[RMDB]
RNA sequence: GGGAACGACUCGAGUAGAGUCGAAAAUCUCAAGCCCUUCGGGGCUUGAGAAAACCUCGGGGACGACCUCGAGGCCUCCUGAUACGCAGGGACGACCCUGAAAGCGGUUGUAGUUCGCUACAACCGCGAUAAAGCUAGAGUUCGCUCUAGCUUUAUCAAAAGAAACAACAACAACAAC
Reactivity to DMS in 0.01 (KOAc 150mM, MgCl2 10mM, bicine 150mM(pH8.5), 24C), signal-to-noise 3, nucleotides 027 to 126: u010c000u000c000a010a020g020c010c010c000u000u020c190g040g030g010g020c000u000u010g000a010g000a010a040a050a080c000c000u000c000g010g010g000g000a010c020g000a300c000c010u000c000g000a010g000g020c030c070u000c000c010u010g020a110u020a060c300g010c000a020g000g000g000a020c010g000a220c010c000c000u000g010a080a160a160g010c000g000g020u000u010g010u000a000g010u000u000c230g000c000u000a000c000a000a010c000c000g000c000
Reactivity to 2A3 in 0.01 (KOAc 150mM, MgCl2 10mM, bicine 150mM(pH8.5), 24C), signal-to-noise 4, nucleotides 027 to 126: u000c000u000c000a000a010g030c010c010c020u000u090c220g010g000g010g010c000u010u000g000a000g000a000a000a000a010c010c000u000c010g010g010g000g010a030c010g230a300c010c010u010c010g000a000g000g000c000c010u010c000c000u050g040a110u070a270c130g000c070a000g000g000g030a030c000g300a300c020c000c000u020g040a130a040a020g000c000g000g000u000u010g000u000a030g010u020u070c180g020c100u000a000c010a000a000c000c000g000c000